RNA sequence: GGGAACGACUCGAGUAGAGUCGAAAAGUGAAAAGAUGAAUUAGUACCACCAGGUGAAUGAACACUGCUUUGCAGAUAGACAAGAAAUUUUUUAAGGCCGGGCGCAGUGGCUCAUGCCCUGUAAUUCCAGCAUUUUGGGAGGCCGAGGCAGGCAGAAAUUACGAUUAGGUUUCGACCUAAUCGUAAUAAAAGAAACAACAACAACAAC
Reactivity to 2A3 in 0.01 (KOAc 150mM, MgCl2 10mM, bicine 150mM(pH8.5), 24C), signal-to-noise 1, nucleotides 027 to 156: g070u060g030a180a040a010a090g040a060u060g010a060a110u080u090a050g030u040a090c000c020a050c000c000a000g000g060u040g070a030a140u060g000a030a020c070a000c030u080g000c040u120u100u180g000c020a020g030a220u120a080g070a040c020a070a060g120a040a050a120u120u150u080u010u080u130a030a110g010g050c050c080g080g080g000c070g000c020a010g020u100g010g000c030u070c080a040u140g000c050c000c000u020g030u030a000a100u080u050c020c040a000g020c060a150u030u130u180u060g070g010g000a090g000g000c010c020g030a020g040g000c010a020g000g020c000a000g070a050a160
Reactivity to DMS in 0.01 (KOAc 150mM, MgCl2 10mM, bicine 150mM(pH8.5), 24C), signal-to-noise 2, nucleotides 027 to 156: g010u010g000a060a080a090a080g020a110u000g000a080a170u000u000a060g000u000a120c060c010a150c040c060a120g000g060u000g030a090a090u010g020a120a110c150a070c030u000g030c040u010u000u010g030c040a090g010a140u000a090g010a110c050a040a170g000a060a050a070u010u010u010u010u010u010a030a190g010g040c030c140g000g050g090c210g020c010a080g000u000g010g000c020u000c110a090u000g040c000c020c040u000g000u000a050a110u000u000c010c010a070g020c050a180u000u000u000u020g000g000g000a130g000g030c080c010g000a020g030g010c030a040g020g040c070a060g010a100a140